Background
Source: RMDB library OK1LIB, as collected in RNAgym. Structure probing data (2A3) for a 177-nucleotide construct. The reactions ran in a buffer of 150 mM KOAc, 10 mM MgCl2 and 150 mM bicine (pH 8.5), at 24 C.

RNA sequence: GGGAACGACUCGAGUAGAGUCGAAAACGUGAUCUGCAUUUGCAUCACAUCCGGUGAUGAUGGGUGAGUGUGUCCUCUUACAGUAUUCAGCCAGUGCAGUGAUUUUAGGCGUUGGGCACGCCUCAUCGCCACCUCCGCCUUUCGAGGCGGAGGUGGCAAAAGAAACAACAACAACAAC
Reactivity to 2A3 in 0.01 (KOAc 150mM, MgCl2 10mM, bicine 150mM(pH8.5), 24C), signal-to-noise 1, nucleotides 027 to 126: c000g040u040g000a030u010c000u000g090c000a080u000u040u250g090c000a000u000c000a000c000a070u100c000c190g080g160u000g000a100u000g000a000u030g030g150g000u040g000a100g000u020g000u000g040u050c030c170u290c000u120u100a010c010a040g070u190a100u090u300c000a000g000c000c000a000g000u030g170c000a030g010u030g060a000u000u000u000u300a000g100g000c050g000u030u110g000g000g000c000a000c060g000c000c000u040c040a140u020c000